[RMDB]
RNA sequence: GGGAACGACUCGAGUAGAGUCGAAAAACAAAGAGAUCGAAAGAGCAAUGUGUAACUCAUCAUCCUAGCGAAUGGUUGGCCUCGAAAGAUCGAGUGUUACCAUCACAUCCCGGACGCUAGAAAAAAACUUUAUGUGACUGUUCGCAGUCACAUAAAGAAAAGAAACAACAACAACAAC
Reactivity to 2A3 in 0.01 (KOAc 150mM, MgCl2 10mM, bicine 150mM(pH8.5), 24C), signal-to-noise 3, nucleotides 027 to 126: a000c040a000a130a030g100a010g010a060u100c080g050a030a090a090g030a000g050c040a060a080u150g030u010g010u070a050a050c010u000c030a020u030c000a040u010c050c010u000a000g000c000g060a080a030u050g060g000u050u120g040g020c010c000u010c010g070a100a150a120g150a180u090c000g010a010g010u180g020u040u030a010c010c000a000u060c030a030c010a090u030c000c010c020g010g010a020c020g030c000u010a010g000a070a010a000a000a000a000a000
Reactivity to DMS in 0.01 (KOAc 150mM, MgCl2 10mM, bicine 150mM(pH8.5), 24C), signal-to-noise 3, nucleotides 027 to 126: a050c080a070a070a080g000a120g010a020u000c090g010a050a080a060g010a030g000c060a060a040u010g010u010g000u020a100a060c080u000c020a050u000c070a030u000c040c000u000a020g000c000g020a180a030u000g010g000u010u020g010g000c050c010u000c010g020a040a130a100g020a150u000c010g020a020g000u010g020u000u000a010c010c000a000u000c150a040c120a060u010c000c000c000g010g000a230c000g000c020u000a010g010a000a000a040a080a060a070a080
Conditions: 150 mM KOAc, 10 mM MgCl2 and 150 mM bicine (pH 8.5), 24 C. Chemical mapping of a 177-nucleotide RNA with 2A3 and DMS. 2A3 adducts were read by reverse transcription with SuperScript II with manganese. Reactivities are given for positions 27 through 126. For DMS, 1,961 sequencing reads were counted.